[RMDB]
RNA sequence: GGGAACGACUCGAGUAGAGUCGAAAAUGGCAAGAGAAGUUAGGGAGUCACUAGCCUUCAAAUACAAAGAAUUAUGUGAUUUCACCGUGGUAUCUAAAGACCAACGUGUUGUACCAGAUCACGGGUGGAUUUGGUAUGGGUUCGCCCAUACCAAAUCAAAAGAAACAACAACAACAAC
Reactivity to 2A3 in 0.01 (KOAc 150mM, MgCl2 10mM, bicine 150mM(pH8.5), 24C), signal-to-noise 1, nucleotides 027 to 126: u080g070g000c040a070a000g040a030g020a280a000g030u030u150a040g000g020g030a050g000u030c000a010c050u020a000g030c000c000u080u070c070a120a130a060u280a170c080a000a080a110g090a120a050u220u120a020u190g090u000g020a030u040u000u100c050a050c010c000g030u000g000g050u050a040u150c050u090a070a080a080g060a030c000c050a090a090c150g090u200g050u120u120g030u060a060c060c000a040g000a030u040c010a010c020g060g000g000u040g110
Reactivity to DMS in 0.01 (KOAc 150mM, MgCl2 10mM, bicine 150mM(pH8.5), 24C), signal-to-noise 3, nucleotides 027 to 126: u000g010g000c060a070a060g010a080g000a140a080g020u010u010a110g010g010g010a040g010u010c030a040c060u010a140g010c100c040u000u000c070a040a050a110u020a130c200a070a070a130g000a080a070u010u010a130u000g030u010g000a050u000u000u000c030a080c000c020g020u000g010g000u000a040u000c060u020a040a060a180g000a020c030c010a100a090c240g000u020g010u020u000g010u020a050c150c110a070g000a020u010c020a010c010g000g030g030u010g010